Source: RMDB library OK3TST, as collected in RNAgym. This 207-nucleotide RNA was probed chemically with DMS and 2A3. The DMS profile rests on 26,818 reads. The reactions ran in a buffer of 150 mM KOAc, 10 mM MgCl2 and 150 mM bicine (pH 8.5), at 24 C. DMS (dimethyl sulfate) methylates the pairing face of unpaired adenines and cytosines.
[RMDB]
RNA sequence: GGGAACGACUCGAGUAGAGUCGAAAAGAGUACACGAGAUCACGUGUGAUCGUGUUCGUACGAUCUCGUACGAGUGUGUGUGUUCUCACACGAUCACACGUGAGUGAACUCGUUCGUGAGUGAGAGUGUUCACUCGAGUGAGUGUGUGAGAACGAACAAGUGAUGUAAGUUUCGACUUACAUCACUUAAAAGAAACAACAACAACAAC
Reactivity to DMS in 0.01 (KOAc 150mM, MgCl2 10mM, bicine 150mM(pH8.5), 24C), signal-to-noise 5, nucleotides 027 to 156: g000a190g020u000a070c030a070c020g000a130g000a170u000c010a040c010g030u010g010u010g010a020u000c060g010u010g020u000u000c010g010u010a020c010g010a210u000c230u000c020g030u000a030c000g010a060g030u000g040u020g020u000g010u010g020u000u000c030u010c000a080c000a030c010g000a030u000c020a070c000a030c040g020u000g000a000g020u000g000a060a070c020u000c000g010u000u000c050g000u010g020a130g020u000g000a060g000a170g020u010g010u010u000c010a020c000u000c010g000a080g040u000g010a080g000u000g020u000g020u000g020a090g010a070a070c040g000a070a100c160
Reactivity to 2A3 in 0.01 (KOAc 150mM, MgCl2 10mM, bicine 150mM(pH8.5), 24C), signal-to-noise 9, nucleotides 027 to 156: g070a020g050u100a040c030a000c050g070a070g030a150u050c010a010c020g020u040g010u010g020a010u020c020g000u020g030u060u020c010g000u000a010c010g060a260u120c220u090c130g000u000a000c020g000a070g020u070g010u010g010u020g030u030g080u200u050c040u020c020a000c000a000c000g010a020u010c010a000c020a000c030g010u010g000a000g000u020g000a020a020c010u000c010g020u040u050c050g040u090g070a060g020u070g020a020g000a020g060u120g100u100u030c010a000c010u000c020g010a040g020u070g020a070g020u080g000u010g000u020g050a070g020a080a030c040g060a020a020c050